[RMDB]
RNA sequence: GGGAACGACUCGAGUAGAGUCGAAAAUCCGGCGGCGGCCUGGGAGGGCCUUCACGCGGGUCCUCAAGGGGAGAACCACCGAUGGAGAAUACGCUCCUCAUCGGACUGUCGCGGCAGAUGAUGCUCGACAGAAGGGGUAUUUCGAUACCCCUUCUGUAAAAGAAACAACAACAACAAC
Reactivity to DMS in 0.01 (KOAc 150mM, MgCl2 10mM, bicine 150mM(pH8.5), 24C), signal-to-noise 5, nucleotides 027 to 126: u020c010c000g000g030c010g000g000c040g000g020c000c010u000g000g010g000a010g010g020g000c000c020u010u000c100a100c200g010c190g020g000g010u000c010c000u010c000a150a090g010g000g010g010a080g010a170a230c030c060a220c010c010g000a030u000g000g000a040g000a060a120u000a100c250g000c100u000c020c020u000c060a020u000c010g000g010a100c020u000g010u010c020g000c030g000g010c140a020g010a080u020g010a110u010g010c030u000c060g010
Reactivity to 2A3 in 0.01 (KOAc 150mM, MgCl2 10mM, bicine 150mM(pH8.5), 24C), signal-to-noise 5, nucleotides 027 to 126: u030c000c000g020g000c010g000g000c020g010g020c000c020u080g020g210g000a020g010g000g000c010c000u020u070c120a090c050g060c050g020g010g000u010c010c010u010c020a070a080g030g030g020g000a110g030a110a080c020c000a040c040c020g010a020u040g050g040a040g020a060a060u170a160c090g030c050u030c000c010u020c010a030u030c010g040g030a060c020u050g010u030c020g020c040g020g000c000a010g000a060u180g010a010u060g040c030u040c040g030
Chemical mapping of a 177-nucleotide RNA with DMS and 2A3. Values are in units of 0.01, from 0 to 300, in steps of 10. The 2A3 profile rests on 4,279 reads. The reactions ran in a buffer of 150 mM KOAc, 10 mM MgCl2 and 150 mM bicine (pH 8.5), at 24 C. It was measured as part of the RMDB libraries RFM100 and RFMREP.